[RMDB]
Conditions: 150 mM KOAc, 10 mM MgCl2 and 150 mM bicine (pH 8.5), 24 C. Chemical mapping of a 177-nucleotide RNA with DMS and 2A3. The 2A3 profile rests on 867 reads. Values cover nucleotides 27 to 126.

RNA sequence: GGGAACGACUCGAGUAGAGUCGAAAAUCCAUCGCGACGUCCCUUGGUGUGCUUUCGGCGGAGCGGUCAGUGUCUGCUUUUGUGCUGGGGCGUGUGGAGCCUAUUCCUCUUUGGGAGUUGCGUGUGAGACCGAUUAGGCGUUCGCGCCUAAUCGGUCAAAAGAAACAACAACAACAAC
Reactivity to DMS in 0.01 (KOAc 150mM, MgCl2 10mM, bicine 150mM(pH8.5), 24C), signal-to-noise 1, nucleotides 027 to 126: u000c010c020a050u010c050g010c010g010a010c030g010u030c010c000c000u030u010g010g050u010g010u000g020c050u000u010u030c050g040g030c010g010g000a090g010c020g030g010u000c090a150g020u000g000u010c050u010g020c040u000u000u000u000g040u000g050c020u000g010g000g010g000c030g020u010g030u010g000g000a090g000c180c080u010a150u010u010c060c000u020c120u010u000u000g010g010g030a300g010u000u000g010c000g000u000g040u010g010a220
Reactivity to 2A3 in 0.01 (KOAc 150mM, MgCl2 10mM, bicine 150mM(pH8.5), 24C), signal-to-noise 1, nucleotides 027 to 126: u010c020c010a060u040c020g040c020g010a030c030g300u100c000c020c000u010u040g170g010u060g040u130g020c120u000u030u300c020g010g000c000g000g020a020g000c010g010g030u080c080a120g140u120g000u130c020u020g020c000u000u160u080u180g210u110g080c000u010g000g020g010g090c040g060u100g040u060g060g010a000g010c020c040u080a170u120u130c020c000u090c000u050u080u000g000g000g010a020g000u000u010g000c000g020u010g030u060g040a150